[RMDB]
RNA sequence: GGGAACGACUCGAGUAGAGUCGAAAAUUGGUGACUUCGGUCACCAAGUGGGCUCCUAAGUCUUCAAUGACGUUGUCAGCGUAUGAUCGGAAACGAUCAAACGCUUGGAUUUAUAAGACAGAAGAUAUGGAUGGUAUGCCAAACUUCGGUUUGGCAAAUCAAGAGUGUCUUUCGAGACACUCUUGAUAAAAGAAACAACAACAACAAC
Reactivity to DMS in 0.01 (KOAc 150mM, MgCl2 10mM, bicine 150mM(pH8.5), 24C), signal-to-noise 2, nucleotides 027 to 156: u000u000g000g040u010g020a010c010u010u010c300g030g010u000c000a030c000c010a000a010g060u010g020g020g060c090u000c020c040u000a050a170g020u000c000u020u000c050a130a120u000g010a090c080g010u000u000g010u000c020a060g020c000g020u000a130u010g000a030u010c000g020g000a200a130a300c000g030a030u000c000a020a090a010c010g010c000u000u000g010g020a070u010u000u000a090u000a090a060g020a120c080a090g010a050a020g010a050u000a240u000g000g000a100u000g000g020u000a120u000g000c020c000a010a000a040c000u000u000c300g050g020u000u000u000g010g020c010a000a020
Reactivity to 2A3 in 0.01 (KOAc 150mM, MgCl2 10mM, bicine 150mM(pH8.5), 24C), signal-to-noise 3, nucleotides 027 to 156: u020u010g000g000u000g000a000c000u040u050c260g070g000u000c000a000c000c000a010a000g030u040g020g070g030c060u030c000c000u050a100a070g020u010c000u050u000c100a130a230u210g030a110c120g040u080u150g060u070c010a000g000c000g020u000a050u070g000a000u000c000g050g000a060a090a030c010g010a000u000c000a030a020a000c000g000c000u000u070g020g010a000u000u250u120a250u070a080a020g040a010c040a020g040a020a020g000a040u050a050u190g040g020a040u130g030g150u170a060u140g010c010c010a020a000a000c010u090u130c270g070g000u010u000u000g010g000c000a020a000